[RMDB]
RNA sequence: GGGAACGACUCGAGUAGAGUCGAAAACGGCAUUUCCCCAGCAGCCAUGACCUACCAGGCUGCGGUGCGGCUCGCCGCACAGGUCAUCCCUCAUCUGGCGCGUCCUGCGUCCUUCCACGCCAACCCAAGACCAUUGCUUCCUUCGGGAAGCAAUGAACACCUCUCCUAACUUCGGUUAGGAGAGGUGAAAAGAAACAACAACAACAAC
Reactivity to 2A3 in 0.01 (KOAc 150mM, MgCl2 10mM, bicine 150mM(pH8.5), 24C), signal-to-noise 2, nucleotides 027 to 156: c060g030g000c080a110u050u040u060c010c000c010c010a040g000c000a020g010c000c020a190u080g040a070c000c050u200a210c080c050a020g000g020c010u000g000c000g010g000u010g000c000g000g010c000u060c110g200c010c010g000c020a040c000a020g030g030u020c040a080u060c010c040c000u090c070a160u070c060u080g050g000c030g000c000g110u150c030c050u130g000c020g050u010c020c000u080u010c050c000a070c050g000c000c020a030a040c030c010c000a050a000g030a040c040c010a000u000u000g010c000u010u000c010c000u030u030c100g080g000g010a000a000g020c000a000a000u000g000a000a000
This 207-nucleotide RNA was probed chemically with 2A3. The data come from the RNA Mapping Database (RMDB), library M2RFPK. The reactions ran in a buffer of 150 mM KOAc, 10 mM MgCl2 and 150 mM bicine (pH 8.5), at 24 C. 2A3 adducts were read by reverse transcription with SuperScript II with manganese.